The record gives the reactivity of an RNA of 177 nucleotides to DMS. The reactions ran in a buffer of 150 mM KOAc, 10 mM MgCl2 and 150 mM bicine (pH 8.5), at 24 C. It was measured as part of the RMDB library OK2TST.
RNA sequence: GGGAACGACUCGAGUAGAGUCGAAAAGGCACGUGGUGGUAUUAUUGAUGAAAAGGCGCUAAUAAAAGCAUUAGACGAAGGACAAAUUAGUCGGGCAGCUAUCGAUGUGUUUGAACAUGAACCUGCAUAGUAGGGUUCCAUUCGUGGAACCCUACUAAAAAGAAACAACAACAACAAC
Reactivity to DMS in 0.01 (KOAc 150mM, MgCl2 10mM, bicine 150mM(pH8.5), 24C), signal-to-noise 1, nucleotides 027 to 126: g040g000c010a050c100g090u010g000g010u000g000g020u000a050u010u010a180u010u010g000a050u010g010a080a050a120a150g010g010c070g000c000u000a020a050u000a050a030a050a070g010c100a070u010u030a080g000a050c030g010a070a010g020g000a170c110a090a110a140u010u000a110g010u010c010g040g000g030c050a010g000c040u010a050u010c070g030a040u000g000u010g000u000u030u000g000a060a050c140a070u000g010a050a060c060c060u010g020c070a110